[RMDB]
RNA sequence: GGGAACGACUCGAGUAGAGUCGAAAAGAAGAUGGUUGAGCGUGAAGAAGCGGUUGUUUGGGAUAUCCUGGAUGAAGUUAUCCGCGAACACCCAGUGCUGCUGAACCGUGCACCAACCCUUCACCGAUAUUUAAUGAUCGUUCGCGAUCAUUAAAUAAAAAGAAACAACAACAACAAC
Reactivity to 2A3 in 0.01 (KOAc 150mM, MgCl2 10mM, bicine 150mM(pH8.5), 24C), signal-to-noise 7, nucleotides 027 to 126: g020a010a010g040a080u220g010g000u020u010g000a020g020c020g020u100g080a300a030g020a030a000g010c010g030g040u100u120g140u100u200u050g060g000g000a080u120a020u260c010c040u070g030g010a020u040g070a170a100g130u220u170a050u010c000c000g020c020g010a020a040c070a020c080c000c010a020g030u030g030c000u000g000c000u000g000a010a010c010c000g000u010g010c020a130c150c000a020a010c020c010c000u020u010c030a030c000c010g020a040
Reactivity to DMS in 0.01 (KOAc 150mM, MgCl2 10mM, bicine 150mM(pH8.5), 24C), signal-to-noise 8, nucleotides 027 to 126: g010a030a010g010a130u010g020g020u010u010g020a180g000c010g010u010g020a060a060g010a300a080g000c020g020g020u000u020g030u010u000u000g010g010g010a070u010a090u000c020c040u000g020g010a030u010g020a170a130g010u000u000a030u000c000c010g020c300g000a030a040c190a090c000c010c010a030g010u000g000c000u000g010c010u000g000a200a100c080c010g000u000g010c060a100c120c010a010a030c030c030c000u000u000c010a240c030c010g000a120